An RNA of 207 nucleotides, treated with 2A3 and DMS and read out base by base. It was measured as part of the RMDB library RSTRND. 2A3 adducts were read by reverse transcription with SuperScript II with manganese.
[RMDB]
RNA sequence: GGGAACGACUCGAGUAGAGUCGAAAAAUGUUAGUCGCGACAGGUGAAGCGGGCCGAGGAUGCAGAAUUAUCUCGUAAACGCUGUCUGCAAAACAAUAAGUGCCAAACAAACGCGCACUGACUUCGCUCUCGCUGCCUAAGCAGUAAGACAGUCCGUCAUUGAAGUUGUGUUCGCACAACUUCAAUGAAAAGAAACAACAACAACAAC
Reactivity to 2A3 in 0.01 (KOAc 150mM, MgCl2 10mM, bicine 150mM(pH8.5), 24C), signal-to-noise 4, nucleotides 027 to 156: a000u110g010u080u020a090g060u080c050g000c020g060a040c060a070g000g040u060g120a130a010g040c000g020g000g030c030c030g000a010g050g020a020u030g030c010a030g050a080a030u190u080a150u170c110u040c090g090u160a080a080a060c090g040c070u070g030u010c010u000g000c000a010a070a050a060c080a030a060u130a150a000g010u010g030c020c010a060a160a070c130a050a090a010c140g050c040g000c050a010c000u000g030a030c000u030u030c050g000c030u010c010u020c030g010c000u010g000c000c010u030a100a040g010c020a020g020u040a060a030g010a020c000a010g030u010c030c010g010u020
Reactivity to DMS in 0.01 (KOAc 150mM, MgCl2 10mM, bicine 150mM(pH8.5), 24C), signal-to-noise 1, nucleotides 027 to 156: a070u000g040u020u000a100g020u010c010g000c040g020a150c060a090g020g060u010g000a070a060g000c030g000g000g000c300c040g000a060g020g040a280u020g020c000a100g010a220a150u020u000a040u000c020u000c140g010u000a030a090a090c060g000c040u020g000u000c050u020g000c060a050a070a080a080c050a070a100u000a030a110g050u000g000c020c050a120a260a200c060a030a040a090c090g020c140g000c040a080c000u000g000a050c010u000u000c040g000c060u000c020u000c000g100c000u000g010c010c030u010a120a100g000c020a060g030u000a030a000g000a040c060a060g000u000c060c010g020u000